[RMDB]
RNA sequence: GGGAACGACUCGAGUAGAGUCGAAAACAGUGUCAGCGUGUCAGUGGCACGACCACAGAUGUUUACCCAUAUUGUCAUCAUCAUGUGGAAAUAGAGAAGUUUCAGCUUUCAAAGGUGAAGUCAUCUGUCUGAUGCCACACAGUAAUAAAUCUGUGUACGACCAUAUUUUAUUCGUAAAAUAUGGUCGAAAAGAAACAACAACAACAAC
Reactivity to DMS in 0.01 (KOAc 150mM, MgCl2 10mM, bicine 150mM(pH8.5), 24C), signal-to-noise 4, nucleotides 027 to 156: c070a090g010u010g020u000c020a080g020c050g030u000g020u000c020a160g020u000g020g020c010a030c010g010a130c030c040a050c020a040g010a030u010g020u000u000u000a140c010c030c050a170u020a110u010u010g010u000c020a090u010c040a060u000c050a090u010g020u000g020g000a080a050a080u000a050g020a080g010a120a180g010u010u000u000c030a090g000c010u000u000u010c080a050a110a050g010g010u000g010a040a050g010u000c010a120u000c020u000g020u000c030u010g000a060u000g020c030c050a070c010a030c010a020g020u010a000a100u000a050a110a120u000c010u010g020u000g000u010a300
Reactivity to 2A3 in 0.01 (KOAc 150mM, MgCl2 10mM, bicine 150mM(pH8.5), 24C), signal-to-noise 9, nucleotides 027 to 156: c050a020g010u010g000u020c010a010g010c030g030u020g020u030c030a040g010u040g020g000c000a000c020g020a020c000c000a000c000a000g020a010u020g050u060u070u120a100c060c070c060a060u130a090u160u270g080u040c020a040u010c000a010u000c050a130u030g010u010g010g040a030a050a030u170a040g070a000g010a090a040g010u010u050u040c030a070g050c030u060u140u200c180a230a190a040g070g020u040g030a020a010g080u100c020a060u010c070u040g080u010c010u020g030a020u020g020c020c010a010c000a000c000a000g020u040a050a210u100a220a140a070u050c000u000g000u000g000u000a030
Background
Source: RMDB library OK3TST, as collected in RNAgym. Structure probing data (DMS and 2A3) for a 207-nucleotide construct. DMS adducts were read by reverse transcription with MarathonRT. The 2A3 profile rests on 8,706 reads.